[RMDB]
RNA sequence: GGGAACGACUCGAGUAGAGUCGAAAAGCACACCUACUCCGACAGCACCGUUGGCCCGUUCGAUGAGGCAGACCUGAUCGAGGAGUGGGUGACGGAUCGCGUCGACGAUGGGGCCGACCCGCAGGCGUGCCACCCCUUUAUUCGUAAAGGGGUGGCAAAAAGAAACAACAACAACAAC
Reactivity to DMS in 0.01 (KOAc 150mM, MgCl2 10mM, bicine 150mM(pH8.5), 24C), signal-to-noise 2, nucleotides 027 to 126: g040c070a220c030a090c000c010u010a030c080u010c010c000g030a140c220a120g010c060a100c050c110g030u020u040g000g020c000c000c000g010u000u000c050g000a030u000g000a050g000g000c300a150g000a070c000c000u010g000a030u000c000g000a150g030g020a070g000u050g050g030g050u010g000a020c090g000g010a030u010c090g000c010g040u000c020g000a120c100g000a080u040g040g000g000g000c000c020g000a120c040c020c000g050c030a060g010g020c050g010
Reactivity to 2A3 in 0.01 (KOAc 150mM, MgCl2 10mM, bicine 150mM(pH8.5), 24C), signal-to-noise 3, nucleotides 027 to 126: g060c030a000c010a020c070c000u060a060c040u010c020c010g040a000c040a060g040c000a060c060c040g020u030u090g200g000c040c010c020g080u110u120c050g030a070u070g090a060g040g000c110a010g070a160c000c000u060g030a070u010c010g020a020g030g050a040g090u170g000g010g000u010g010a000c000g020g030a080u130c030g000c020g040u030c000g030a120c070g060a120u180g010g010g010g020c010c010g050a090c000c020c010g070c060a030g080g000c020g020
The record gives the reactivity of an RNA of 177 nucleotides to DMS and 2A3. The reactions ran in a buffer of 150 mM KOAc, 10 mM MgCl2 and 150 mM bicine (pH 8.5), at 24 C.